The record gives the reactivity of an RNA of 177 nucleotides to 2A3 and DMS. The DMS profile rests on 1,776 reads. For 2A3 the reverse transcriptase was SuperScript II with manganese. The RNA was probed in 150 mM KOAc, 10 mM MgCl2 and 150 mM bicine (pH 8.5) at 24 C. Values cover nucleotides 27 to 126. It was measured as part of the RMDB library VIROID.
[RMDB]
RNA sequence: GGGAACGACUCGAGUAGAGUCGAAAAGGAGGAUCUCCAACUAAAGAGUGGAGGAAAUUUCGGAAAGCUUCUCCCAAGAAGAACUGGGACGCUCUCAAGAAGGAGGAGAUUUCCCGAACGCUGGAGACUUAAUUAAAGAGUUCGCUCUUUAAUUAAGAAAAGAAACAACAACAACAAC
Reactivity to 2A3 in 0.01 (KOAc 150mM, MgCl2 10mM, bicine 150mM(pH8.5), 24C), signal-to-noise 2, nucleotides 027 to 126: g070g010a050g020g030a030u030c010u000c010c000a060a030c020u170a130a080a120g120a060g020u050g010g020a020g040g060a070a080a070u030u030u040c040g020g030a070a030a030g020c010u050u020c000u020c040c010c010a000a060g070a080a010g020a050a030c040u040g060g050g010a010c040g000c030u000c000u000c040a010a080g120a080a020g080g010a030g010g040a010g000a010u020u000u020c020c020c000g010a040a010c060g000c090u080g040g020a020g030a050
Reactivity to DMS in 0.01 (KOAc 150mM, MgCl2 10mM, bicine 150mM(pH8.5), 24C), signal-to-noise 3, nucleotides 027 to 126: g000g020a070g010g000a140u000c020u000c010c000a050a160c040u000a130a120a090g000a110g010u010g000g000a090g010g000a060a060a110u000u000u000c040g010g000a090a070a060g000c000u000u010c050u000c030c030c040a100a130g010a070a070g000a050a070c080u000g010g010g020a040c150g000c050u000c020u000c060a110a080g030a100a060g000g010a120g000g000a040g000a040u010u000u000c000c000c010g010a200a050c180g000c070u000g010g000a080g000a100